[RMDB]
RNA sequence: GGGAACGACUCGAGUAGAGUCGAAAAAUUAAUGUGGUGGAAUGUUGGGCUGUACCAGAUGGUUGGGCUUGGUGGGCUAAUUUCUGGCCUGCCCUAUCCAAGCACAGAGUUGGAUCAUGUGGUCCAAUUGAAAGAAUGGGCUACUAGAUUCCUAAAGCUCAAUAUAACGCUUCGGCGUUAUAUUGAGAAAAGAAACAACAACAACAAC
Reactivity to 2A3 in 0.01 (KOAc 150mM, MgCl2 10mM, bicine 150mM(pH8.5), 24C), signal-to-noise 1, nucleotides 027 to 156: a000u080u070a050a040u090g000u010g070g000u010g020g060a070a120u110g000u090u040g110g020g020c010u030g020u100a100c030c010a030g010a110u070g000g070u040u060g030g000g000c040u100u040g000g000u050g060g040g000c010u030a160a020u040u100u140c130u070g020g010c030c040u020g000c000c000c000u060a060u040c000c000a020a050g100c040a020c010a000g120a010g090u080u100g020g010a010u030c040a080u130g000u050g020g020u010c000c000a030a060u040u150g050a160a080a010g080a060a030u040g010g000g000c010u030a010c000u060a070g020a020u080u110c050c000u050a110a040a020g020
Reactivity to DMS in 0.01 (KOAc 150mM, MgCl2 10mM, bicine 150mM(pH8.5), 24C), signal-to-noise 1, nucleotides 027 to 156: a170u020u000a040a040u010g010u000g010g010u000g030g000a100a040u000g030u000u020g040g010g000c070u010g000u000a060c000c030a000g010a080u000g070g020u000u000g010g020g030c040u010u000g030g030u000g010g010g030c000u000a030a090u010u010u010c090u010g000g010c040c020u010g050c000c000c090u000a090u000c020c010a040a150g000c020a100c080a170g000a090g020u010u020g040g010a090u040c050a230u020g030u020g030g050u000c000c000a010a070u010u000g010a120a100a120g010a020a180u000g020g000g000c010u020a050c030u010a290g010a200u000u000c000c010u010a030a090a130g020